[RMDB]
RNA sequence: GGGAACGACUCGAGUAGAGUCGAAAACAACAGUCCGACGAUGUUUCCCAGCCAGGGGUUUUCAUCCUCAAGUUUCUUGAUCUUCUUGUUGGAUCGCCGGAGAUCCUUCUCGAGCAGUCGCCUUUUCCACGCUACACGUUCGCGUGUAGCAAAAGAAACAACAACAACAAC
Reactivity to DMS in 0.01 (KOAc 150mM, MgCl2 10mM, bicine 150mM(pH8.5), 24C), signal-to-noise 5, nucleotides 027 to 129: c160a050a060c120a140g020u000c000c000g030a100c090g030a080u030g000u000u000u000c000c000c000a030g040c110c060a000g010g000g000g010u030u000u030u050c020a090u030c000c000u050c060a100a140g020u070u020u020c030u000u100g010a090u000c020u030u010c060u040u060g030u000u000g000g000a070u030c080g070c060c040g060g000a100g010a080u020c020c030u030u000c030u020c030g010a060g010c040a070g030u000c040g040c020c010u010u010u000u020c020c020a120c240
Reactivity to 2A3 in 0.01 (KOAc 150mM, MgCl2 10mM, bicine 150mM(pH8.5), 24C), signal-to-noise 9, nucleotides 027 to 129: c040a010a010c030a030g050u030c010c020g020a050c040g020a050u050g030u020u040u040c010c010c010a010g070c050c040a040g000g010g000g010u050u060u070u090c060a080u060c010c010u050c030a050a020g020u040u080u030c010u020u070g090a110u050c010u050u010c010u030u100g070u040u040g040g020a030u030c030g030c030c020g050g010a060g010a050u040c010c030u030u010c030u000c020g030a030g010c020a020g030u040c030g070c000c000u040u030u020u010c020c030a030c060